The record gives the reactivity of an RNA of 177 nucleotides to DMS and 2A3. For 2A3 the reverse transcriptase was SuperScript II with manganese. The reactions ran in a buffer of 150 mM KOAc, 10 mM MgCl2 and 150 mM bicine (pH 8.5), at 24 C. The DMS profile rests on 1,396 reads. 2A3 is a SHAPE reagent: it acylates the 2'-hydroxyl of flexible nucleotides of all four kinds.

RNA sequence: GGGAACGACUCGAGUAGAGUCGAAAAGAUAUGGAUAGCGGGUGCGACAUCAAUGAUGUCGGAAACGAUUGAGAUGUCGAACUACACCGCGCUAUCCUAAGUCAAAACAGGUGGUUCGCCACCUGAAGUGUACCAUGCUGUUCGCAGCAUGGUACACAAAAGAAACAACAACAACAAC
Reactivity to DMS in 0.01 (KOAc 150mM, MgCl2 10mM, bicine 150mM(pH8.5), 24C), signal-to-noise 2, nucleotides 027 to 126: g000a060u010a300u000g000g000a040u000a000g030c000g000g000g000u000g000c000g000a020c020a040u000c000a130a220u010g020a150u000g010u010c000g000g010a090a080a160c010g000a020u000u000g000a150g000a000u020g010u000c000g000a050a060c080u050a300c010a000c000c000g010c010g000c000u000a000u000c000c000u000a010a050g000u000c010a080a050a090a190c000a010g010g010u000g000g000u000u000c250g000c010c000a010c000c000u000g000a000a060
Reactivity to 2A3 in 0.01 (KOAc 150mM, MgCl2 10mM, bicine 150mM(pH8.5), 24C), signal-to-noise 2, nucleotides 027 to 126: g020a000u060a030u130g000g000a000u000a000g010c000g000g000g040u030g040c000g020a000c010a000u030c010a050a300u200g080a040u200g050u020c020g020g050a030a020a010c000g000a000u030u060g070a060g020a050u000g010u040c030g010a060a020c090u120a020c030a010c000c010g300c010g000c070u000a000u000c000c000u000a030a030g000u030c030a010a010a080a180c020a010g000g000u010g000g080u070u140c300g080c070c000a000c000c010u000g000a060a000